[RMDB]
RNA sequence: GGGAACGACUCGAGUAGAGUCGAAAAAGGAACACUCAGAGUGUUGGAGAAUUGUUCGGAUAGGAAGGGAUGUUGAAUCAUCCUGUUAUCCGAGGCAUGAGCCAGCCCUACAGCUGAGGGAGGACUUAAACUCUCCUUAACAAUGGUUAGACUCAUACAUUACUCCCGCUUUCGAGCGGGAGUAAUGAAAAGAAACAACAACAACAAC
Reactivity to 2A3 in 0.01 (KOAc 150mM, MgCl2 10mM, bicine 150mM(pH8.5), 24C), signal-to-noise 2, nucleotides 027 to 156: a000g110g000a070a000c020a020c020u040c050a090g060a170g030u050g080u020u070g050g000a090g050a100a130u110u160g000u070u000c010g030g000a010u020a000g110g060a100a190g100g010g000a010u070g010u090u180g100a170a250u260c000a000u020c000c020u040g070u040u000a000u000c000c000g000a020g000g000c040a000u060g010a050g130c010c000a010g020c000c010c000u200a240c170a060g060c010u040g000a010g010g010g000a000g050g000a000c130u160u160a140a060a000c020u020c010u020c050c020u050u080a050a050c050a090a070u090g050g100u160u100a090g020a070c000u020c040a040u110a210